[RMDB]
RNA sequence: GGGAACGACUCGAGUAGAGUCGAAAACACGGGAGGCGCAGCUGCUGCAUGACGCUUUAACGUCGCAGCUCACCACCGCCUGACCAUUCUGCCAGGAGAUAACGGUUGCCCACUCUUUAAUCAUUGUUCGUUAUUGUAAGUUCGCUUACAAUAACGAAAAAGAAACAACAACAACAAC
Reactivity to 2A3 in 0.01 (KOAc 150mM, MgCl2 10mM, bicine 150mM(pH8.5), 24C), signal-to-noise 5, nucleotides 027 to 126: c080a020c030g020g000g030a060g010g000c040g030c050a030g000c030u060g000c010u020g020c020a140u220g000a010c010g030c000u200u140u190a140a040c020g000u000c010g000c010a010g000c000u020c010a060c020c020a020c000c010g020c000c000u080g040a100c000c000a020u090u010c020u070g050c010c020a050g040g020a070g030a040u100a110a030c040g040g020u050u060g040c000c010c010a030c020u120c040u050u180u150a090a050u110c070a100u050u180g040u120
Reactivity to DMS in 0.01 (KOAc 150mM, MgCl2 10mM, bicine 150mM(pH8.5), 24C), signal-to-noise 3, nucleotides 027 to 126: c130a130c120g020g010g000a070g010g010c030g000c090a030g000c040u010g010c030u010g000c080a150u000g010a020c040g020c080u020u020u030a120a130c010g040u000c020g030c000a010g010c020u010c070a080c080c010a080c080c020g020c020c040u000g000a140c040c070a110u000u010c060u000g000c020c020a050g000g010a050g000a080u000a060a120c070g010g000u000u000g010c030c020c010a090c100u000c050u000u000u020a070a100u010c140a120u000u000g020u000
The record gives the reactivity of an RNA of 177 nucleotides to 2A3 and DMS.
For 2A3 the reverse transcriptase was SuperScript II with manganese.
DMS adducts were read by reverse transcription with MarathonRT.
It was measured as part of the RMDB library RFMREP.
For DMS, 2,728 sequencing reads were counted.
The RNA was probed in 150 mM KOAc, 10 mM MgCl2 and 150 mM bicine (pH 8.5) at 24 C.
For 2A3, 7,335 sequencing reads were counted.